[RMDB]
RNA sequence: GGGAACGACUCGAGUAGAGUCGAAAAGGAGGAAUCCCGAGGGGAUCGCCCACUAAAGAGUAGAGGAAUUCUCGGAAAGCUCUCCCAAGAAGAACCAGAAUCCCUCAAGAGAGAGGAGAAUCCCCAUUAGCCACGUUGUUCGCAACGUGGAAAAGAAACAACAACAACAAC
Reactivity to 2A3 in 0.01 (KOAc 150mM, MgCl2 10mM, bicine 150mM(pH8.5), 24C), signal-to-noise 7, nucleotides 027 to 129: g080g010a030g000g070a070a060u060c020c000c000g030a080g000g010g010g010a020u040c030g070c020c020c010a050c030u190a130a110a020g150a030g020u160a030g000a020g020g000a040a040u050u020c040u050c100g040g000a140a080a010g010c010u020c000u030c030c020c010a010a020g060a020a000g000a040a040c000c010a010g020a010a020u010c000c000c000u030c020a040a000g090a010g000a000g010a040g030g020a020g010a040a060u010c010c000c000c020a060u080u140a020g020
Reactivity to DMS in 0.01 (KOAc 150mM, MgCl2 10mM, bicine 150mM(pH8.5), 24C), signal-to-noise 5, nucleotides 027 to 129: g050g020a050g010g060a090a070u010c050c000c010g010a110g040g000g000g010a030u020c000g090c140c000c010a030c080u000a050a000a070g000a090g040u070a090g020a010g030g030a050a020u060u030c000u020c090g000g000a030a050a040g020c080u020c050u040c080c060c070a110a070g050a020a020g000a040a060c000c000a040g080a070a070u000c110c030c030u020c020a120a040g030a030g020a070g010a000g020g030a110g010a050a050u010c020c000c030c020a130u030u060a060g040
The record gives the reactivity of an RNA of 170 nucleotides to 2A3 and DMS. For 2A3, 17,676 sequencing reads were counted. Values cover nucleotides 27 to 129. For DMS, 14,676 sequencing reads were counted. For 2A3 the reverse transcriptase was SuperScript II with manganese.